Overview
The record gives the reactivity of an RNA of 177 nucleotides to DMS and 2A3. The 2A3 profile rests on 46,155 reads. For DMS the reverse transcriptase was MarathonRT.

[RMDB]
RNA sequence: GGGAACGACUCGAGUAGAGUCGAAAAGCUCGGAGACGAGCAAGGCUGACAAAACAAUGUCCCAACCUCCACGUGGUGUCGGCUGGAUAAUGCUGCAUUAUGUUGCAUUUAUCAACUGGGAAAGAAAAUAUGGUAAUUACUUCGGUAAUUACCAUAUAAAAGAAACAACAACAACAAC
Reactivity to DMS in 0.01 (KOAc 150mM, MgCl2 10mM, bicine 150mM(pH8.5), 24C), signal-to-noise 9, nucleotides 027 to 126: g000c000u000c000g000g000a230g010a210c000g010a010g010c010a080a060g000g020c010u000g010a030c030a050a070a100a090c180a100a070u010g000u010c000c010c000a100a060c040c020u010c030c030a090c140g010u010g000g010u000g000u000c010g000g000c010u000g000g000a020u000a010a010u010g000c000u000g010c010a150u040u040a100u030g030u000u000g000c010a010u000u010u020a010u000c010a050a040c120u010g000g000g010a040a040a060g010a090a080a080
Reactivity to 2A3 in 0.01 (KOAc 150mM, MgCl2 10mM, bicine 150mM(pH8.5), 24C), signal-to-noise 9, nucleotides 027 to 126: g000c000u000c000g020g020a110g010a050c020g000a000g000c000a010a040g030g000c010u020g010a010c020a020a100a040a020c060a080a140u100g040u040c000c000c000a010a020c000c010u050c020c030a110c110g090u140g000g010u010g010u010c000g010g000c010u020g020g000a010u010a030a000u010g000c010u020g000c020a070u100u150a140u300g020u020u020g000c000a010u030u050u110a040u030c010a020a030c030u050g010g030g030a050a110a040g130a010a100a030

For 2A3 the reverse transcriptase was SuperScript II with manganese.